[RMDB]
RNA sequence: GGGAACGACUCGAGUAGAGUCGAAAAGGGUUGCUAGCCAUUGCAGGCAUUAGACUCCAUCGUGCAGCCAUCUACACCGCAGAGAUCCAUAAGAGCCUCAGCACCAAUCUAGAUGUAACUAACUCGACCCUGCUAAGUGAUUCGUCACUUAGCAGGGAAAAGAAACAACAACAACAAC
Reactivity to DMS in 0.01 (KOAc 150mM, MgCl2 10mM, bicine 150mM(pH8.5), 24C), signal-to-noise 2, nucleotides 027 to 126: g030g000g000u000u000g000c030u020a050g030c000c050a110u020u050g000c130a100g000g030c010a070u000u000a020g050a020c020u030c030c040a050u040c070g010u000g000c070a090g000c010c000a090u040c030u070a110c130a050c000c040g000c070a020g000a200g000a030u010c030c070a120u000a070a130g000a180g000c010c020u090c010a060g010c080a090c020c040a150a070u040c040u030a030g040a010u020g050u010a010a060c120u000a120a120c000u000c000g000a250
Reactivity to 2A3 in 0.01 (KOAc 150mM, MgCl2 10mM, bicine 150mM(pH8.5), 24C), signal-to-noise 5, nucleotides 027 to 126: g070g000g000u060u020g040c060u070a040g010c010c030a060u070u220g050c110a070g030g000c010a020u080u120a010g020a100c010u010c010c020a070u080c060g050u070g050c000a010g030c020c000a000u010c010u040a020c040a010c050c030g050c030a010g020a000g020a150u030c030c020a080u130a150a080g050a020g070c010c010u030c020a030g000c030a010c020c010a020a070u050c030u070a040g030a110u060g040u110a040a060c040u040a050a020c010u040c050g040a090

An RNA of 177 nucleotides, treated with DMS and 2A3 and read out base by base. DMS adducts were read by reverse transcription with MarathonRT. It was measured as part of the RMDB library OK1LIB. Reactivities are given for positions 27 through 126.